Annotation
The record gives the reactivity of an RNA of 177 nucleotides to 2A3. It was measured as part of the RMDB library OK1LIB.
[RMDB]
RNA sequence: GGGAACGACUCGAGUAGAGUCGAAAAAGGCGUCAUGCACAUGCUGGAAGGUCGAGAUGACGCCGAUUUCAUGUGCACAAACCGGCUUUGAAGCUGAAUACUUAUACUUGUAUAGCAGAACAAAAACACGCUAGGCAGUCUUCGGACUGCCUAGCGUAAAAGAAACAACAACAACAAC
Reactivity to 2A3 in 0.01 (KOAc 150mM, MgCl2 10mM, bicine 150mM(pH8.5), 24C), signal-to-noise 1, nucleotides 027 to 126: a000g090g150c110g000u140c020a020u210g160c020a020c000a170u140g020c050u060g130g240a160a000g300g000u020c110g080a000g050a300u000g000a160c000g100c000c000g000a000u000u000u110c060a000u000g110u000g000c050a000c000a000a130a000c260c000g000g140c030u160u000u000g000a030a110g000c000u000g020a000a000u000a050c000u030u300a140u060a300c110u210u300g060u000a000u020a000g050c000a030g000a140a080c110a000a190a000a000a000c000

The reactions ran in a buffer of 150 mM KOAc, 10 mM MgCl2 and 150 mM bicine (pH 8.5), at 24 C.